Annotation:
Chemical mapping of a 207-nucleotide RNA with DMS and 2A3. For 2A3, 3,187 sequencing reads were counted. For DMS, 5,263 sequencing reads were counted. It was measured as part of the RMDB library OK3TST. 2A3 adducts were read by reverse transcription with SuperScript II with manganese. DMS adducts were read by reverse transcription with MarathonRT.

RNA sequence: GGGAACGACUCGAGUAGAGUCGAAAACAGCAUUAACAGCAUACAUACUCCUGUAUUGCUGAGCCAUGGCAUCACCGACAAUAGGGGCGAAAGCAUAGGCAGAAUUUAUUGUCGCAACCCCUGUGGCUGUAGACUUAGUAAUGUCCGGUGUCAGCUGCACGAAAGGUUAGUUCGCUAACCUUUCGUGAAAAGAAACAACAACAACAAC
Reactivity to DMS in 0.01 (KOAc 150mM, MgCl2 10mM, bicine 150mM(pH8.5), 24C), signal-to-noise 3, nucleotides 027 to 156: c000a100g030c040a170u000u000a080a150c020a040g020c020a180u000a080c090a180u000a120c100u010c060c050u000g020u010a040u000u000g030c000u000g000a210g000c040c040a120u010g000g020c050a090u000c030a140c120c010g020a060c040a050a070u030a080g010g000g000g030c020g000a100a140a080g020c020a130u000a090g020g010c020a060g010a130a120u000u020u010a090u080u000g010u000c000g020c030a070a060c020c000c020c060u000g000u000g010g020c000u000g000u000a070g010a060c040u000u000a110g000u010a040a090u000g000u010c030c130g010g010u000g000u000c030a080g040c040u000g000
Reactivity to 2A3 in 0.01 (KOAc 150mM, MgCl2 10mM, bicine 150mM(pH8.5), 24C), signal-to-noise 6, nucleotides 027 to 156: c000a010g030c040a070u090u190a080a090c010a020g020c010a040u100a050c010a010u160a120c050u100c140c030u020g010u010a020u080u250g000c000u010g010a010g020c040c040a090u080g030g010c010a030u060c030a040c040c020g080a040c040a070a050u060a140g000g010g040g000c040g110a100a050a010g030c030a060u160a150g030g000c030a020g080a090a030u190u200u100a110u270u110g020u030c030g010c050a040a070c000c000c000c000u040g020u070g020g000c040u060g050u110a050g040a040c000u100u100a020g070u090a140a100u140g050u050c050c050g020g000u000g010u010c030a020g010c030u030g000